[RMDB]
RNA sequence: GGGAACGACUCGAGUAGAGUCGAAAAAUUUUAGGGUCUACUACUGGAGGACUAGUCUUAAGACAGUGGGACAAAAGUUCUUGGGAUUUUCACCCCUUAAUCAAUAUGCUCAUGUUGACUACCAAUGUGUAAGGCAGUCGAGAGAAGCAGAGAAGAACUAUCAGUAAAUAUUCGUAUUUACUGAUAGAAAAGAAACAACAACAACAAC
Reactivity to 2A3 in 0.01 (KOAc 150mM, MgCl2 10mM, bicine 150mM(pH8.5), 24C), signal-to-noise 3, nucleotides 027 to 156: a000u190u220u110u140a040g040g020g000u000c040u050a080c000u040a040c030u110g090g030a030g010g000a010c010u020a040g020u020c040u070u100a110a070g100a060c060a090g050u110g040g000g010a000c010a010a220a010a010g010u000u000c000u020u030g070g000g020a060u080u060u120u160c050a020c000c000c010c010u040u160a070a040u070c050a010a060u040a040u230g050c010u030c050a060u090g060u100u100g040a040c010u030a060c020c030a120a140u130g080u040g030u150a080a030g000g000c040a000g000u030c030g010a010g000a000g010a060a030g000c030a010g040a020g020a190a010g010a020a020
Reactivity to DMS in 0.01 (KOAc 150mM, MgCl2 10mM, bicine 150mM(pH8.5), 24C), signal-to-noise 1, nucleotides 027 to 156: a130u000u010u010u010a060g010g010g010u000c030u010a050c050u000a080c040u020g030g010a130g000g000a060c040u000a070g010u010c010u000u000a090a090g000a080c130a060g010u000g000g010g010a140c030a040a170a070a120g010u000u000c040u010u010g010g090g010a120u000u000u010u010c070a060c110c020c000c050u000u000a060a120u000c050a030a120u010a060u000g010c000u010c030a220u010g010u000u000g000a010c000u000a020c000c010a040a060u000g010u000g020u010a110a300g020g050c000a010g040u010c010g010a120g000a150g010a110a070g010c040a060g030a120g000a090a090g010a060a130
Overview
Structure probing data (2A3 and DMS) for a 207-nucleotide construct. Reactivities are given for positions 27 through 156. Conditions: 150 mM KOAc, 10 mM MgCl2 and 150 mM bicine (pH 8.5), 24 C. 2A3 adducts were read by reverse transcription with SuperScript II with manganese.